[RMDB]
RNA sequence: GGGAACGACUCGAGUAGAGUCGAAAAGAAUUUAUAGUAGAUACAGGAGAAGGAUUUGUUGUAUCAGAAGAAAUUGAUAAAAAAGAUUGGCCAGUAGACUACAUAGCGGUUGAUGCUAUUUAUACAAUGCGCAUAAAUUAUUCGUAAUUUAUGCGCAAAAAGAAACAACAACAACAAC
Reactivity to DMS in 0.01 (KOAc 150mM, MgCl2 10mM, bicine 150mM(pH8.5), 24C), signal-to-noise 1, nucleotides 027 to 126: g000a160a070u000u000u000a080u000a170g000u000a080g010a210u000a040c020a030g060g000a090g020a110a110g000g040a070u000u000u000g020u010u010g000u000a010u000c010a060g010a100a150g040a090a080a040u020u010g010a060u020a000a020a070a130a090a070g000a020u010u000g010g000c000c010a050g000u010a070g000a060c080u000a010c050a060u000a050g000c050g000g000u010u010g010a100u000g020c010u000a020u000u030u000a110u000a070c110a030a150